An RNA of 177 nucleotides, treated with DMS and 2A3 and read out base by base.

RNA sequence: GGGAACGACUCGAGUAGAGUCGAAAAGUAUGGUACAGGGCGUGCACAGUUAAACGUUGCUUCAGAGGCACAGCGUAUAUUGUUAACGUUACAUAAUCAUGUCAUUGUACUUCAUGAUGAACAUGAAGAAGGUAAAAACAUUCGUGUUUUUACCUUCAAAAGAAACAACAACAACAAC
Reactivity to DMS in 0.01 (KOAc 150mM, MgCl2 10mM, bicine 150mM(pH8.5), 24C), signal-to-noise 8, nucleotides 027 to 126: g010u010a060u000g010g010u000a050c090a070g000g000g010c040g030u010g020c160a100c100a080g010u000u010a060a080a080c080g020u000u000g010c030u000u010c160a100g020a140g010g020c060a080c100a080g010c030g010u000a110u010a070u000u010g000u000u000a060a050c070g000u000u000a070c130a070u010a080a130u000c020a010u000g010u000c020a030u000u000g010u000a080c190u010u010c110a020u000g000a060u000g000a090a050c030a010u000g010a040a130
Reactivity to 2A3 in 0.01 (KOAc 150mM, MgCl2 10mM, bicine 150mM(pH8.5), 24C), signal-to-noise 6, nucleotides 027 to 126: g020u020a050u220g030g010u060a020c030a060g000g050g000c010g010u020g010c030a020c000a060g020u040u060a090a160a010c030g030u040u030g020c010u090u080c090a080g040a130g140g020c030a040c030a090g010c010g020u030a030u010a010u140u090g080u080u090a040a010c030g010u010u070a030c030a090u150a080a080u060c010a000u010g020u020c010a040u000u080g030u020a060c000u070u090c020a020u030g040a040u060g030a050a070c000a010u010g000a010a070